An RNA of 177 nucleotides, treated with 2A3 and DMS and read out base by base. The RNA was probed in 150 mM KOAc, 10 mM MgCl2 and 150 mM bicine (pH 8.5) at 24 C. For 2A3, 4,511 sequencing reads were counted. The data come from the RNA Mapping Database (RMDB), library M2PK50. For DMS the reverse transcriptase was MarathonRT.
RNA sequence: GGGAACGACUCGAGUAGAGUCGAAAAGUUGAAGUGUUCGCACUUCAACAAACGCUCAACUCAUGGAGCGCAAGACGAAUAGCUACAUAUUCGACAAGAGAAAAAGACUGUAGUUCGCUACAGUCAACACCUAUUUUAGCUUCGGCUAAAAUAGGUGAAAAGAAACAACAACAACAAC
Reactivity to 2A3 in 0.01 (KOAc 150mM, MgCl2 10mM, bicine 150mM(pH8.5), 24C), signal-to-noise 4, nucleotides 027 to 126: g000u000u010g000a020a010g000u020g020u070u120c170g060c070a000c010u010u020c000a000a000c010a000a010a000c020g020c000u000c000a040a180c090u030c050a210u080g040g010a000g000c020g000c190a130a030g080a030c010g000a020a020u010a010g040c050u170a100c100a230u030a040u040u030c010g010a010c030a050a030g030a010g030a100a100a020a020a040g010a010c010u000g010u000a000g010u030u050c210g000c080u000a000c000a000g000u000c000a000a000
Reactivity to DMS in 0.01 (KOAc 150mM, MgCl2 10mM, bicine 150mM(pH8.5), 24C), signal-to-noise 3, nucleotides 027 to 126: g000u000u000g000a010a010g040u010g000u010u000c300g040c000a010c000u020u000c000a010a010c010a080a070a170c020g010c000u000c000a050a030c030u000c040a220u000g000g000a000g000c000g040c110a140a110g010a090c000g010a000a010u000a020g010c110u010a180c150a100u000a010u000u000c010g010a170c030a090a050g000a130g000a110a110a120a100a100g000a020c000u020g010u000a000g000u000u010c200g020c020u000a020c000a000g000u000c010a070a090